RNA sequence: GGGAACGACUCGAGUAGAGUCGAAAAUCUAAGAGCGUAACACACACUCAGACUGUACGACAGUCUGACACACACAUACGCUAGUGUAUCGUGUGUGAGAUAUCGAUGUAGCACGAAAAUGAAAGAAGCUAUCUAAGGACUUCGGUCCUUAGAUAGCAAAAGAAACAACAACAACAAC
Reactivity to DMS in 0.01 (KOAc 150mM, MgCl2 10mM, bicine 150mM(pH8.5), 24C), signal-to-noise 3, nucleotides 027 to 126: u000c000u000a090a160g030a100g020c010g010u000a130a090c080a060c100a070c110a110c150u000c030a030g000a030c000u000g030u000a060c250g000a160c000a000g010u000c000u000g000a060c000a000c000a000c030a030c010a010u000a000c030g020c270u010a070g010u000g010u010a040u000c140g020u000g010u010g000u000g000a040g000a110u000a040u000c050g040a080u010g010u000a100g020c100a050c050g000a070a030a080a070u020g000a070a070a030g000a060a090
Reactivity to 2A3 in 0.01 (KOAc 150mM, MgCl2 10mM, bicine 150mM(pH8.5), 24C), signal-to-noise 3, nucleotides 027 to 126: u040c010u050a120a010g040a040g100c030g040u100a140a010c030a000c010a000c000a030c110u030c000a010g000a010c000u040g010u130a110c170g110a060c150a010g000u000c000u000g000a010c000a000c000a000c000a000c000a000u050a010c030g060c150u070a080g110u050g000u200a020u030c090g000u000g020u000g000u030g000a000g000a010u120a020u040c090g040a080u080g030u090a010g030c040a020c100g060a070a030a070a120u250g070a050a080a150g090a100a030
Chemical mapping of a 177-nucleotide RNA with DMS and 2A3.
2A3 adducts were read by reverse transcription with SuperScript II with manganese.
The RNA was probed in 150 mM KOAc, 10 mM MgCl2 and 150 mM bicine (pH 8.5) at 24 C.